[RMDB]
RNA sequence: GGGAACGACUCGAGUAGAGUCGAAAAACGGUGCGGAAGUUCGCGCUUCCGUGAAACGCGAAAAUCGGACGGUGGCUGCAAGUCGCAUCGCAAAACCGCGGCAAGUGUAGUUAGCGAGAGGAGGCUGAAACCAUCCAACACUUCGGUGUUGGAUGAACUCUCAUUCAGGAUUCGUCCUGAAUGAGAGAAAAGAAACAACAACAACAAC
Reactivity to 2A3 in 0.01 (KOAc 150mM, MgCl2 10mM, bicine 150mM(pH8.5), 24C), signal-to-noise 3, nucleotides 027 to 156: a000c030g020g000u050g000c020g030g040a050a020g030u120u120c040g030c030g000c080u010u000c000c010g010u020g030a110a070a020c090g010c020g060a060a000a000a110u150c040g020g020a020c040g000g050u030g030g010c060u090g000c050a070a030g010u030c010g000c000a040u040c030g000c060a110a090a010a010c040c060g010c010g050g000c020a050a080g020u040g030u130a060g040u100u090a020g030c020g030a020g000a030g060g000a020g010g000c010u030g030a050a000a020c010c000a000u010c000c000a000a000c000a000c000u030u050c200g100g000u010g010u010u000g000g000a000u000g010a000a000
Reactivity to DMS in 0.01 (KOAc 150mM, MgCl2 10mM, bicine 150mM(pH8.5), 24C), signal-to-noise 1, nucleotides 027 to 156: a050c020g030g000u000g000c040g000g000a050a070g010u000u000c160g010c210g010c000u000u010c000c130g010u000g000a010a060a040c010g000c030g000a090a060a100a110u000c040g020g000a100c000g010g000u000g030g020c030u020g040c030a000a090g000u010c000g000c010a120u010c030g040c060a070a050a060a210c070c090g000c140g000g060c070a050a080g000u010g020u000a080g020u010u000a180g010c060g000a040g010a070g050g010a040g020g010c090u000g000a030a040a080c160c000a030u000c000c010a000a010c000a000c010u000u030c300g110g000u000g030u000u000g000g000a010u000g000a000a070
This 207-nucleotide RNA was probed chemically with 2A3 and DMS. For 2A3 the reverse transcriptase was SuperScript II with manganese. For DMS, 2,584 sequencing reads were counted. It was measured as part of the RMDB library M2RFPK. The RNA was probed in 150 mM KOAc, 10 mM MgCl2 and 150 mM bicine (pH 8.5) at 24 C. For DMS the reverse transcriptase was MarathonRT. Reactivities are given for positions 27 through 156.